Chemical mapping of a 207-nucleotide RNA with DMS and 2A3. The data come from the RNA Mapping Database (RMDB), library OK3TST. Conditions: 150 mM KOAc, 10 mM MgCl2 and 150 mM bicine (pH 8.5), 24 C. High 2A3 reactivity points to a flexible backbone, as in loops and unpaired stretches. 2A3 adducts were read by reverse transcription with SuperScript II with manganese.
RNA sequence: GGGAACGACUCGAGUAGAGUCGAAAAGCCAUCCGAAACGUACGCGUCUGUAUAGGAUGGGAAAGCAUGCAACGCUCUCUAACAAUGGCGAUACAGACUACAGUCACUUACAACAAGUGACCGUACGGAAACCAUCCUUCAGCCAUCCGAAACGUACACUUGAUACGACAUUCGUGUCGUAUCAAGUAAAAGAAACAACAACAACAAC
Reactivity to DMS in 0.01 (KOAc 150mM, MgCl2 10mM, bicine 150mM(pH8.5), 24C), signal-to-noise 3, nucleotides 027 to 156: g020c020c030a070u010c040c010g000a040a090a210c070g030u000a030c030g020c040g020u000c020u020g050u000a040u000a090g010g050a010u000g000g000g000a060a060a090g000c030a160u000g010c120a110a190c080g000c010u010c040u000c070u000a070a050c070a090a030u010g000g040c000g010a120u000a060c030a060g020a090c040u010a050c030a080g030u000c000a010c020u010u010a110c250a160a180c200a030a040g000u000g010a010c000c000g030u010a050c000g000g040a130a100a200c000c010a000u000c010c030u000u000c070a220g000c000c000a040u010c030c030g010a070a080a090c040g010u010a100c130
Reactivity to 2A3 in 0.01 (KOAc 150mM, MgCl2 10mM, bicine 150mM(pH8.5), 24C), signal-to-noise 7, nucleotides 027 to 156: g060c010c010a050u080c050c050g130a140a090a070c020g010u000a000c020g020c020g020u000c010u010g010u010a030u040a050g020g000a010u010g000g000g030a000a060a020g050c070a030u270g060c050a080a080c110g010c020u020c010u000c020u130a100a080c070a120a110u040g000g000c010g010a000u010a020c010a000g000a010c020u090a080c110a030g000u000c000a010c010u030u110a090c080a300a010c030a220a050g000u000g000a000c000c000g000u000a000c000g040g060a040a010a010c000c010a010u010c000c000u070u130c060a010g000c010c000a020u020c050c020g130a120a090a050c080g070u130a020c030